[RMDB]
RNA sequence: GGGAACGACUCGAGUAGAGUCGAAAAGCGCGGUUCGCCGCGCGGAAAGGGGUCCAUGCAAUGCUCGAUGAAAGAGCAACAGCCUGAAGCCUCCACGGGACAUGCUCUAACCGAGCAGCAUGGACGGAGGCACCCGAAACACGUUAUUCGUAACGAAGAUUACCACAACUUUCGAGUUGUGGUAAUCAAAAGAAACAACAACAACAAC
Reactivity to 2A3 in 0.01 (KOAc 150mM, MgCl2 10mM, bicine 150mM(pH8.5), 24C), signal-to-noise 4, nucleotides 027 to 156: g010c000g020c030g000g050u030u120c230g060c050c000g000c000g000c000g000g030a100a040a000g130g010g040g010u000c010c000a010u010g000c000a060a300u130g000c010u010c010g150a180u220g170a300a100a000g000a000g030c000a010a030c020a030g070c000c010u020g010a050a010g000c010c000u000c000c000a020c010g020g000g010a020c030a070u090g000c000u000c010u030a300a300c300c050g000a000g000c010a000g000c000a000u000g000g000a000c000g000g000a000g010g000c000a020c000c000c010g090a010a080a020c170a030c050g020u030u050a040u170u090c170g070u170a020a050c230g050a060a110
Reactivity to DMS in 0.01 (KOAc 150mM, MgCl2 10mM, bicine 150mM(pH8.5), 24C), signal-to-noise 2, nucleotides 027 to 156: g010c000g100c030g050g040u000u000c150g030c000c000g000c010g070c010g000g000a030a080a110g030g000g060g000u000c010c030a010u010g000c030a120a080u000g010c010u000c000g050a300u030g020a070a120a050g000a030g000c000a050a140c130a130g030c000c000u000g030a090a100g000c000c000u010c000c000a300c040g040g000g000a090c070a130u000g000c010u010c000u000a040a140c100c030g010a020g100c010a300g000c020a020u000g000g010a020c020g000g020a030g020g020c030a130c040c010c020g000a090a100a120c110a050c020g040u000u000a070u010u000c090g030u000a050a160c070g000a120a150
Conditions: 150 mM KOAc, 10 mM MgCl2 and 150 mM bicine (pH 8.5), 24 C. The record gives the reactivity of an RNA of 207 nucleotides to 2A3 and DMS. Reactivities are given for positions 27 through 156. High 2A3 reactivity points to a flexible backbone, as in loops and unpaired stretches. The data come from the RNA Mapping Database (RMDB), library RNAMAK. The DMS profile rests on 2,399 reads.